An RNA of 177 nucleotides, treated with DMS and 2A3 and read out base by base. DMS (dimethyl sulfate) methylates the pairing face of unpaired adenines and cytosines. As a SHAPE reagent, 2A3 marks flexible, mostly unpaired nucleotides at the ribose 2'-OH. Source: RMDB library RFMREP, as collected in RNAgym. For DMS, 902 sequencing reads were counted.
RNA sequence: GGGAACGACUCGAGUAGAGUCGAAAAUGUAUAUGUGUUCCUAUUCAAACAAUGCAAUUCCUAAAUGGUAGAAGAUGUUGCGAAGCCAGUACCGCCUGGCGAUGAAAUGGCGGACGAAUUAGCAACAGUUCAUCCAAUUGUUCGCAAUUGGAUGAACAAAAGAAACAACAACAACAAC
Reactivity to DMS in 0.01 (KOAc 150mM, MgCl2 10mM, bicine 150mM(pH8.5), 24C), signal-to-noise 1, nucleotides 027 to 126: u000g010u000a030u000a110u010g010u000g000u010u000c040c070u000a130u000u030c130a080a050a130c060a040a070u000g010c010a030a040u000u000c000c010u000a060a050a190u000g000g030u000a070g020a110a130g000a100u000g030u000u010g000c010g000a140a090g010c010c030a080g000u030a090c000c010g000c030c000u000g020g100c090g020a070u040g000a100a100a110u000g000g000c000g010g000a020c030g000a030a050u010u010a250g020c030a000a020c010a100
Reactivity to 2A3 in 0.01 (KOAc 150mM, MgCl2 10mM, bicine 150mM(pH8.5), 24C), signal-to-noise 1, nucleotides 027 to 126: u040g020u000a030u030a020u080g070u000g050u110u140c060c000u030a110u060u150c090a090a110a040c000a010a010u030g020c030a040a100u040u040c000c000u060a090a110a060u070g000g010u020a020g030a210a010g100a130u060g000u010u000g000c010g010a040a000g010c010c020a020g020u070a300c000c000g000c000c000u010g130g000c090g030a000u030g060a000a050a080u120g030g030c010g000g000a000c000g050a000a040u100u070a000g000c000a020a010c010a000